[RMDB]
An RNA of 207 nucleotides, treated with 2A3 and DMS and read out base by base.
2A3 adducts were read by reverse transcription with SuperScript II with manganese.
For DMS, 3,214 sequencing reads were counted.
The reactions ran in a buffer of 150 mM KOAc, 10 mM MgCl2 and 150 mM bicine (pH 8.5), at 24 C.
Reactivities are given for positions 27 through 156.
RNA sequence: GGGAACGACUCGAGUAGAGUCGAAAAGGCAGGUCACCUCAAGAAGCUUCCUCCACGAAGUCAUCUAUAGCACCAGAAGAGCAAAGCAAAAAGGGGCCUUCAGUUCAAAAAAGGAAAAAGACAUAACAGGUCUUCUUCAUAUGUUCUUUCCUUUACCAAUUAUCUCUUUGUUCGCAAAGAGAUAAUUAAAAGAAACAACAACAACAAC
Reactivity to 2A3 in 0.01 (KOAc 150mM, MgCl2 10mM, bicine 150mM(pH8.5), 24C), signal-to-noise 4, nucleotides 027 to 156: g060g000c040a010g020g010u050c050a130c200c020u050c080a050a080g070a090a020g020c020u050u000c010c020u040c030c020a080c100g040a060a020g040u060c020a080u040c120u150a180u130a150g030c060a040c040c040a050g070a160a020g010a070g000c040a100a100a000g000c010a070a030a050a050a000g020g010g010g000c010c000u030u060c050a080g020u040u060c060a120a160a030a030a020a010g030g050a080a090a010a020a000g010a020c010a010u070a080a060c070a070g100g020u060c020u190u040c000u040u040c110a060u050a010u080g030u050u020c000u020u020u030c000c020u020u020u060a060c030c010
Reactivity to DMS in 0.01 (KOAc 150mM, MgCl2 10mM, bicine 150mM(pH8.5), 24C), signal-to-noise 2, nucleotides 027 to 156: g020g030c090a060g000g030u000c040a110c020c020u010c040a120a150g000a150a250g030c030u000u000c060c010u020c030c030a130c060g020a110a110g000u000c020a120u000c050u000a120u000a150g030c030a100c030c020a160g010a070a070g020a080g030c060a060a120a150g020c030a020a030a100a110a040g000g020g030g020c030c010u000u000c050a100g010u020u010c040a030a070a100a120a050a120g020g020a010a020a010a030a020g010a050c000a070u000a110a150c180a150g000g010u000c010u000u000c040u000u000c020a100u000a070u000g010u000u010c050u000u000u000c000c000u000u000u000a100c180c090